[RMDB]
RNA sequence: GGGAACGACUCGAGUAGAGUCGAAAACAUCAUCCCUUCGGGGAUGAUGAAAGAUCGAAAGAUCAGGCUUACCGUAAUAAGCCAAAAUACGAGGGAAACGCAAAAGACCUGUGUUCGCACAGGUCAACGAUAAAUCCAACUUCGGUUGGAUUUAUCGAAAAGAAACAACAACAACAAC
Reactivity to 2A3 in 0.01 (KOAc 150mM, MgCl2 10mM, bicine 150mM(pH8.5), 24C), signal-to-noise 3, nucleotides 027 to 126: c000a000u010c000a010u010c000c000c010u000u030c200g060g000g000g000a000u010g000a000u000g000a010a020a000g000a000u010c010g030a070a020a050g000a000u010c020a000g020g010c000u020u030a050c080c060g100u040a070a120u060a090a000g010c010c010a080a020a030a000u150a030c050g010a090g060g060g020a060a150a030c060g000c100a090a120a050a070g010a000c000c000u010g010u000g040u040u050c170g000c090a010c010a000g000g010u000c000a000a000
Reactivity to DMS in 0.01 (KOAc 150mM, MgCl2 10mM, bicine 150mM(pH8.5), 24C), signal-to-noise 4, nucleotides 027 to 126: c000a010u000c010a020u010c000c000c000u000u000c210g030g000g000g000a000u000g000a010u000g000a020a070a070g020a000u000c000g000a120a100a160g000a010u000c000a140g000g010c000u000u000a040c100c120g020u020a060a260u000a000a030g000c000c000a060a060a070a070u010a060c110g000a070g000g000g000a080a060a070c070g000c220a040a050a120a120g010a030c000c000u000g010u000g020u000u010c170g020c010a000c000a000g000g010u000c000a010a030

This 177-nucleotide RNA was probed chemically with 2A3 and DMS. Source: RMDB library M2PK50, as collected in RNAgym. Conditions: 150 mM KOAc, 10 mM MgCl2 and 150 mM bicine (pH 8.5), 24 C. For 2A3 the reverse transcriptase was SuperScript II with manganese.